[RMDB]
RNA sequence: GGGAACGACUCGAGUAGAGUCGAAAAGGGGAAAAGGAAUACAAUCUAAAAGCUUGUCUUCCAGAUACAAGAGAACUUUAGCUGUUUGAUGUCACAAUCCCAAGUACAUAUGCAAAUGUCUAAUCUAGGUAUACACAUGUGUAUAUGUGCACAUUAAAUUAGUCAUCCGUUUCGACGGAUGACUAAUAAAAGAAACAACAACAACAAC
Reactivity to 2A3 in 0.01 (KOAc 150mM, MgCl2 10mM, bicine 150mM(pH8.5), 24C), signal-to-noise 2, nucleotides 027 to 156: g070g030g020g000a060a070a050a010g010g000a000a000u030a020c010a000a070u030c010u190a210a110a000a000g000c010u040u030g000u000c000u020u010c010c010a020g120a110u150a050c060a060a040g050a020g040a150a090c010u130u170u070a040g070c050u020g060u040u030u040g080a060u030g040u060c020a030c030a090a070u030c040c000c000a010a010g030u000a000c020a010u010a000u000g000c010a100a100a000u010g010u000c010u120a060a080u140c040u070a080g170g000u140a090u060a060c070a020c000a030u010g020u000g000u050a000u000a000u000g010u020g030c040a020c000a020u120u260a130a220
Reactivity to DMS in 0.01 (KOAc 150mM, MgCl2 10mM, bicine 150mM(pH8.5), 24C), signal-to-noise 1, nucleotides 027 to 156: g000g070g000g000a020a140a150a140g010g040a070a190u000a160c110a020a100u000c080u000a080a080a100a070g030c140u000u010g000u000c000u000u010c080c000a300g010a290u000a030c090a110a150g000a140g000a110a000c080u000u000u020a120g000c000u000g000u000u000u000g060a100u000g010u000c010a100c030a070a250u000c000c020c000a030a190g020u000a000c000a010u010a030u000g000c000a070a030a010u000g010u000c070u000a090a190u000c070u010a090g000g040u000a060u000a080c040a020c000a000u000g000u000g080u000a020u000a000u000g010u000g000c040a090c030a120u000u000a000a110

Structure probing data (2A3 and DMS) for a 207-nucleotide construct. For DMS the reverse transcriptase was MarathonRT. The reactions ran in a buffer of 150 mM KOAc, 10 mM MgCl2 and 150 mM bicine (pH 8.5), at 24 C. The 2A3 profile rests on 1,025 reads. Source: RMDB library OK3TST, as collected in RNAgym.